[RMDB]
RNA sequence: GGGAACGACUCGAGUAGAGUCGAAAAGACACUGAGUCUGUCUCUGAGUCACACUCUCUCAGACAGAGUGUCACACUCUCAGUCACACUCACUCACUCAGUGAGUGUGACACUGACUCACACUGUGAGGACCUUAGCGUGUUCGCACGCUAAGGUCCAAAAGAAACAACAACAACAAC
Reactivity to 2A3 in 0.01 (KOAc 150mM, MgCl2 10mM, bicine 150mM(pH8.5), 24C), signal-to-noise 2, nucleotides 027 to 126: g020a000c020a010c060u030g000a020g060u000c000u010g050u060c020u090c040u100g010a020g030u000c040a010c000a020c080u040c000u020c010u010c020a010g060a230c030a010g030a030g020u010g030u010c000a010c020a000c070u040c000u010c100a020g000u000c010a000c020a000c010u000c000a000c030u020c020a130c020u300c060a010g020u000g000a000g000u000g000u000g020a000c010a000c000u050g010a010c000u000c030a030c030a020c030u120g040u050g150a070
Reactivity to DMS in 0.01 (KOAc 150mM, MgCl2 10mM, bicine 150mM(pH8.5), 24C), signal-to-noise 2, nucleotides 027 to 126: g000a140c000a040c100u000g000a140g030u000c000u010g000u000c010u000c050u000g070a040g210u000c130a100c130a020c050u020c000u000c050u000c170a090g040a110c300a010g000a040g030u000g000u000c180a220c160a300c130u010c000u000c040a210g000u020c000a000c020a040c000u000c000a000c000u000c300a190c270u060c130a030g050u050g080a090g080u010g010u000g030a010c040a070c120u000g000a110c080u000c020a000c300a030c150u000g000u000g010a280